[RMDB]
RNA sequence: GGGAACGACUCGAGUAGAGUCGAAAACUUCACAUUUGGAACCGGGGCAGGAAGCAUGGAUGACCAUUCUCCUUCUUAUCAAGGGUUCGAACUGCCGGUCCUGAGAAGGAGGAAAUAUUCCUUUAUAGAUGCUGAGGGUAUUCGUACCCUCAGCAUCAAAAGAAACAACAACAACAAC
Reactivity to 2A3 in 0.01 (KOAc 150mM, MgCl2 10mM, bicine 150mM(pH8.5), 24C), signal-to-noise 2, nucleotides 027 to 126: c000u100u080c010a080c040a260u150u080u210g050g010a040a040c000c040g030g000g050g000c010a030g080g020a060a020g020c030a040u070g020g020a050u080g040a070c020c010a030u000u060c020u000c000c000u010u030c000u070u180a120u180c040a060a100g010g000g000u150u180c020g090a050a070c090u130g030c000c050g020g000u000c000c000u010g000a010g000a030a000g000g010a010g040g010a000a080a000u160a040u020u020c000c000u060u090u050a290u100a070
Reactivity to DMS in 0.01 (KOAc 150mM, MgCl2 10mM, bicine 150mM(pH8.5), 24C), signal-to-noise 1, nucleotides 027 to 126: c070u000u000c050a000c030a050u060u010u040g000g000a070a090c050c040g000g000g000g000c030a030g020g000a050a180g000c200a010u010g050g000a010u000g050a240c140c140a030u000u000c000u000c000c000u000u000c010u000u070a150u000c260a090a000g010g000g030u000u030c190g090a010a070c180u030g050c190c030g010g000u000c000c030u000g000a040g000a000a000g000g000a030g000g030a000a050a070u120a080u000u000c010c000u030u010u000a080u010a170
Chemical mapping of a 177-nucleotide RNA with 2A3 and DMS. The DMS profile rests on 1,254 reads. For 2A3 the reverse transcriptase was SuperScript II with manganese. Conditions: 150 mM KOAc, 10 mM MgCl2 and 150 mM bicine (pH 8.5), 24 C.